[RMDB]
RNA sequence: GGGAACGACUCGAGUAGAGUCGAAAACGCUGCGAUAAUGCGAGGCGAUAACGGCGAUAACAUGGUCAAGAUCCUUCGCGGUCGGGAUUUCCCUGGAUGACCUCAGCUUGCGGGGGGCGCCUUGGCGCGCUAACUAGCGAUUCGUCGCUAGUUAGCGAAAAGAAACAACAACAACAAC
Reactivity to 2A3 in 0.01 (KOAc 150mM, MgCl2 10mM, bicine 150mM(pH8.5), 24C), signal-to-noise 9, nucleotides 027 to 126: c030g010c030u070g030c030g080a080u070a200a060u270g030c030g020a040g010g020c060g020a010u050a130a060c070g030g010c020g030a040u050a150a060c060a150u180g070g000u020c020a020a030g040a110u020c010c000u040u050c030g000c020g000g030u080c030g000g000g020a030u030u050u060c020c010c020u040g090g020a120u080g040a050c010c000u040c030a040g030c030u120u300g020c060g000g000g000g000g000g010c010g030c010c000u010u040g050g000c020g000
Reactivity to DMS in 0.01 (KOAc 150mM, MgCl2 10mM, bicine 150mM(pH8.5), 24C), signal-to-noise 9, nucleotides 027 to 126: c070g010c020u000g000c060g010a110u010a070a080u010g010c030g010a060g000g000c050g010a070u010a070a090c120g000g010c040g010a090u010a070a110c140a240u010g000g020u000c030a080a110g000a110u000c010c010u000u010c060g020c040g000g010u010c050g010g000g010a110u010u000u000c010c020c030u000g010g000a100u000g000a060c030c010u000c080a080g010c050u000u000g030c080g010g000g000g000g000g010c060g010c060c020u000u000g010g010c040g010